Annotation: Source: RMDB libraries RFM100 and RFMREP, as collected in RNAgym. The record gives the reactivity of an RNA of 177 nucleotides to DMS and 2A3. The RNA was probed in 150 mM KOAc, 10 mM MgCl2 and 150 mM bicine (pH 8.5) at 24 C. For 2A3 the reverse transcriptase was SuperScript II with manganese.
RNA sequence: GGGAACGACUCGAGUAGAGUCGAAAAAGGGAGCUUGAAGUGGUUUCCUGGCCCUCGAAAUAAGCAGCAGAGGGGACGAGCGGUAUAGAAUACCGGUCUUGUGAACAUCAGAGGAUGUCAUGCGGCAUGUACGUAACAAAUUCGUUUGUUACGUACAAAAAGAAACAACAACAACAAC
Reactivity to DMS in 0.01 (KOAc 150mM, MgCl2 10mM, bicine 150mM(pH8.5), 24C), signal-to-noise 9, nucleotides 027 to 126: a030g000g000g000a030g010c020u000u010g010a120a140g030u020g000g000u000u000u000c000c010u000g000g020c030c000c010u010c100g000a060a090a080u030a080a120g010c070a060g010c050a100g000a090g010g000g000g010a070c040g000a050g010c020g010g000u000a020u010a120g010a100a300u010a010c010c000g010g010u010c010u000u000g010u010g000a100a050c040a030u000c030a160g010a130g010g010a020u000g000u000c040a130u010g000c040g000g020c080a130
Reactivity to 2A3 in 0.01 (KOAc 150mM, MgCl2 10mM, bicine 150mM(pH8.5), 24C), signal-to-noise 9, nucleotides 027 to 126: a010g050g020g010a030g010c040u110u110g080a170a070g100u120g150g000u010u030u020c000c010u010g080g000c000c030c000u000c020g050a070a050a050u230a130a050g040c040a000g000c030a010g010a020g030g030g010g000a040c300g010a020g050c000g000g020u020a040u030a080g290a230a030u040a030c000c000g020g050u030c000u020u090g040u030g040a070a020c010a030u030c030a040g090a100g300g050a030u020g010u030c010a020u050g020c020g020g000c020a010